An RNA of 177 nucleotides, treated with DMS and read out base by base. The DMS profile rests on 654 reads. The reactions ran in a buffer of 150 mM KOAc, 10 mM MgCl2 and 150 mM bicine (pH 8.5), at 24 C. Source: RMDB library TTRDEL, as collected in RNAgym. For DMS the reverse transcriptase was MarathonRT.
RNA sequence: GGGAACGACUCGAGUAGAGUCGAAAAGAUAUGGACUGAAGAGAGGGAGGCAGCUCGGAAACGAGCUGCUACCCACCCUACCCACCUCUUACCAGUCCUAAGUCAAAGGGCAUGUUCGCAUGCCCAAUCAAAGGCAAAGCUUCGGCUUUGCCUUUGAAAAAGAAACAACAACAACAAC
Reactivity to DMS in 0.01 (KOAc 150mM, MgCl2 10mM, bicine 150mM(pH8.5), 24C), signal-to-noise 1, nucleotides 027 to 126: g040a030u000a250u000g030g000a040c000u000g020a090a120g000a050g010a210g020g020g010a300g010g020c010a020g000c000u000c000g000g000a020a030a080c010g020a000g020c000u000g000c000u000a040c040c020c060a110c080c020c050u000a120c030c010c060a250c030c070u000c000u010u000a130c300c000a020g030u000c000c010u000a000a120g010u000c030a070a060a120g000g010g000c000a000u020g000u000u000c260g010c010a010u000g000c000c000c000a050a000